[RMDB]
RNA sequence: GGGAACGACUCGAGUAGAGUCGAAAAGUGGAGGGCCGAACGCACGUCGGUUGAAAACGGCGGCGAUGACCUGCGGGUAGGGGUGAAAGGCCUAUCAAACCCGGAGAUAUCUCGUUCUCCCCGAAAUGGCUAUAAUCCUAUUCGUAGGAUUAUAGCCAAAAGAAACAACAACAACAAC
Reactivity to DMS in 0.01 (KOAc 150mM, MgCl2 10mM, bicine 150mM(pH8.5), 24C), signal-to-noise 3, nucleotides 027 to 126: g010u060g000g000a150g000g010g070c050c070g020a120a210c030g020c030a050c010g040u000c000g000g020u020u020g010a080a100a140a080c000g020g000c000g030g000c010g000a110u020g000a070c070c020u000g010c070g010g000g000u030a200g000g000g000g000u020g010a050a100a110g020g010c000c010u010a010u020c020a060a110a150c040c000c010g000g020a060g000a120u010a020u020c140u020c050g020u000u000c010u000c020c000c000c040g000a050a080a050u020
Reactivity to 2A3 in 0.01 (KOAc 150mM, MgCl2 10mM, bicine 150mM(pH8.5), 24C), signal-to-noise 4, nucleotides 027 to 126: g170u150g010g030a060g020g000g010c040c040g020a070a020c020g020c050a190c090g010u010c010g020g050u070u200g070a040a040a010a020c010g000g000c000g010g010c010g000a000u060g070a030c000c020u040g030c040g010g010g020u050a070g010g030g010g040u040g060a110a080a030g150g000c000c010u020a070u080c030a040a110a040c000c000c010g070g000a040g000a020u230a040u080c080u010c030g010u060u000c000u040c010c010c020c000g020a060a050a090u080
The record gives the reactivity of an RNA of 177 nucleotides to DMS and 2A3. DMS adducts were read by reverse transcription with MarathonRT. The RNA was probed in 150 mM KOAc, 10 mM MgCl2 and 150 mM bicine (pH 8.5) at 24 C. Values cover nucleotides 27 to 126.